Chemical mapping of a 177-nucleotide RNA with 2A3 and DMS.
It was measured as part of the RMDB library OK1LIB.
The 2A3 profile rests on 8,221 reads.
Conditions: 150 mM KOAc, 10 mM MgCl2 and 150 mM bicine (pH 8.5), 24 C.
Values are in units of 0.01, from 0 to 300, in steps of 10.
The DMS profile rests on 8,313 reads.
2A3 adducts were read by reverse transcription with SuperScript II with manganese.
Reactivities are given for positions 27 through 126.

[RMDB]
RNA sequence: GGGAACGACUCGAGUAGAGUCGAAAAUUAUCGCGGGGUUGGUCAUCGCACUGCUGGCGGCCAUCACCCCUGCUGCGGGCGAACGCCCGGAAAGCCGCCGCCAGGCGCUCGCAAAUGCCGCCGAGGCCUACCAUACAAAUUUCGAUUUGUAUGGUAGAAAAGAAACAACAACAACAAC
Reactivity to 2A3 in 0.01 (KOAc 150mM, MgCl2 10mM, bicine 150mM(pH8.5), 24C), signal-to-noise 6, nucleotides 027 to 126: u140u060a140u170c050g000c020g020g010g010g010u020u040g030g030u070c060a080u090c070g020c060a160c150u170g020c050u080g030g010c000g000g000c020c010a030u100c070a070c000c000c010c000u010g010c010u040g030c000g020g010g000c030g080a270a100c120g020c000c000c000g000g020a080a050a000g020c010c020g000c000c000g000c010c000a010g020g000c010g020c010u020c010g020c010a060a080a070u120g020c020c010g020c030c020g020a070g030g000c000
Reactivity to DMS in 0.01 (KOAc 150mM, MgCl2 10mM, bicine 150mM(pH8.5), 24C), signal-to-noise 4, nucleotides 027 to 126: u030u060a080u010c060g020c020g030g000g010g010u000u020g000g010u010c040a070u020c050g000c020a140c140u020g010c070u030g000g010c090g000g010c020c070a030u020c130a130c030c010c010c010u020g050c040u010g010c060g000g010g020c030g010a140a120c100g010c020c000c060g030g010a040a110a190g000c040c090g050c020c030g010c030c020a060g000g000c020g020c040u000c060g010c030a070a090a070u010g000c010c020g000c040c050g000a150g000g000c080